[RMDB]
RNA sequence: GGGAACGACUCGAGUAGAGUCGAAAACCCCUGCGGGCCCCCCCAUAAGAUGGCAGGAACCCACUCAUUGGGGUCCGCUGUUCCAUUCUUUCUUACCUUGUGGCCGGCAUGGUCCCAGCCUCCUCGCUAACCAAGGUCUUCGGACCUUGGAAAAGAAACAACAACAACAAC
Reactivity to 2A3 in 0.01 (KOAc 150mM, MgCl2 10mM, bicine 150mM(pH8.5), 24C), signal-to-noise 3, nucleotides 027 to 129: c020c000c000c010u010g010c060g000g000g020c000c000c000c000c000c000c030a020u040a030a070g080a070u040g050g020c060a050g040g030a030a070c000c000c030a040c050u130c050a120u090u180g020g010g000g000u000c000c000g050c000u000g030u030u020c060c020a110u060u100c000u060u120u030c000u140u100a120c070c000u060u100g080u180g110g000c020c000g040g050c060a070u090g020g000u000c020c000c010a040g040c000c000u000c000c000u050c020g050c030u030a050a050
Reactivity to DMS in 0.01 (KOAc 150mM, MgCl2 10mM, bicine 150mM(pH8.5), 24C), signal-to-noise 1, nucleotides 027 to 129: c030c000c000c160u040g030c070g070g000g000c000c000c000c020c000c000c000a100u030a100a110g040a100u020g020g060c080a120g080g000a070a100c100c030c020a080c140u020c120a060u050u030g000g000g000g000u020c010c050g010c100u040g010u050u040c000c000a090u000u060c070u040u030u000c000u000u000a220c120c080u060u030g020u020g070g030c070c030g000g000c010a060u050g040g070u050c020c010c080a250g020c000c000u030c010c070u010c040g030c000u040a040a070
Background: The data come from the RNA Mapping Database (RMDB), library 15KLIB. Chemical mapping of a 170-nucleotide RNA with 2A3 and DMS.